[RMDB]
The record gives the reactivity of an RNA of 207 nucleotides to DMS and 2A3. The DMS profile rests on 1,961 reads. The RNA was probed in 150 mM KOAc, 10 mM MgCl2 and 150 mM bicine (pH 8.5) at 24 C. It was measured as part of the RMDB library PDB130. For 2A3, 2,565 sequencing reads were counted.
RNA sequence: GGGAACGACUCGAGUAGAGUCGAAAACUUCGCUUCGGCGAAGAAACACGUCCCUCUCCAAACGAGAGAACAUGCAUGGGCUGGCAUGAGCGCGUGGGGCCCCGAGGCGCUGAACCUUGAGGCCUCAUGCUGGGACUAAAACGAGACUUCGGUCUCGGAUGGGUGAAAUCUUCGGAUUUCACCCAUCAAAAGAAACAACAACAACAAC
Reactivity to DMS in 0.01 (KOAc 150mM, MgCl2 10mM, bicine 150mM(pH8.5), 24C), signal-to-noise 1, nucleotides 027 to 156: c010u020u010c010g050c000u000u000c260g000g040c000g020a030a020g030a080a040a070c070a050c030g040u020c020c010c010u020c000u010c000c050a120a110a100c120g000a050g000a000g000a100a130c020a020u000g000c000a110u010g030g010g030c110u000g020g000c050a090u000g010a110g060c150g040c030g060u010g020g010g020g010c000c020c000c040g010a000g030g020c000g000c300u020g010a150a020c000c030u020u030g010a020g010g030c010c000u000c000a000u000g000c000u000g010g000g030a100c020u000a040a040a070a180c010g000a030g010a020c020u010u000c230g090g000u010c000u010c010g000
Reactivity to 2A3 in 0.01 (KOAc 150mM, MgCl2 10mM, bicine 150mM(pH8.5), 24C), signal-to-noise 2, nucleotides 027 to 156: c010u000u000c000g010c010u030u080c240g120g000c020g000a000a000g010a020a100a010c110a020c070g020u000c000c030c000u000c000u020c000c060a260a290a180c170g010a080g000a010g010a230a010c020a010u040g050c010a040u090g030g130g040c080u070g040g000c020a010u020g020a030g070c040g000c000g010u010g010g000g000g000c030c010c020c000g020a010g000g010c070g000c220u140g060a120a140c000c010u000u000g010a020g000g000c000c000u000c000a000u010g000c000u000g010g000g000a010c030u080a000a030a020a120c010g000a010g000a010c000u060u080c250g120g000u000c010u000c000g000